[RMDB]
RNA sequence: GGGAACGACUCGAGUAGAGUCGAAAAACACAAAUAGCGCUUCAUUUCAGUGUUAUUGCUUGCACGAGCUACUGCUUGAAGCCAUUCAUGGCCGCGGUGAGCACCAACUAUGGCGUUGCCGGUGGCACACAGACGGGUGAUUCGUCACCCGUCUGUGAAAAGAAACAACAACAACAAC
Reactivity to 2A3 in 0.01 (KOAc 150mM, MgCl2 10mM, bicine 150mM(pH8.5), 24C), signal-to-noise 2, nucleotides 027 to 126: a000c050a000c040a070a040a060u130a110g030c060g030c080u000u010c010a100u020u160u150c010a020g010u020g140u240u140a150u200u120g000c010u020u050g130c180a050c170g040a020g000c040u080a000c010u060g050c000u000u050g010a000a000g040c000c010a080u050u070c070a040u100g130g000c000c010g060c020g050g000u070g170a000g000c000a000c030c010a030a090c070u110a210u300g030g000c000g030u030u020g010c020c000g100g060u110g010g030c030a000
Reactivity to DMS in 0.01 (KOAc 150mM, MgCl2 10mM, bicine 150mM(pH8.5), 24C), signal-to-noise 2, nucleotides 027 to 126: a120c080a130c210a050a070a020u000a110g030c130g010c030u000u000c020a030u030u000u010c090a020g000u000g010u000u000a080u000u010g000c000u000u010g010c300a100c300g000a030g000c000u000a020c030u000g000c300u000u000g000a000a030g000c000c020a080u020u000c200a070u010g020g030c000c010g000c010g000g020u000g000a050g000c050a030c040c000a060a130c260u010a050u010g000g030c060g030u010u000g020c010c000g010g010u000g000g000c030a240
Chemical mapping of a 177-nucleotide RNA with 2A3 and DMS. 2A3 adducts were read by reverse transcription with SuperScript II with manganese. The reactions ran in a buffer of 150 mM KOAc, 10 mM MgCl2 and 150 mM bicine (pH 8.5), at 24 C. High DMS reactivity at an A or C suggests that its Watson-Crick edge is free. It was measured as part of the RMDB library OK2TRN. For DMS the reverse transcriptase was MarathonRT. For 2A3, 1,584 sequencing reads were counted.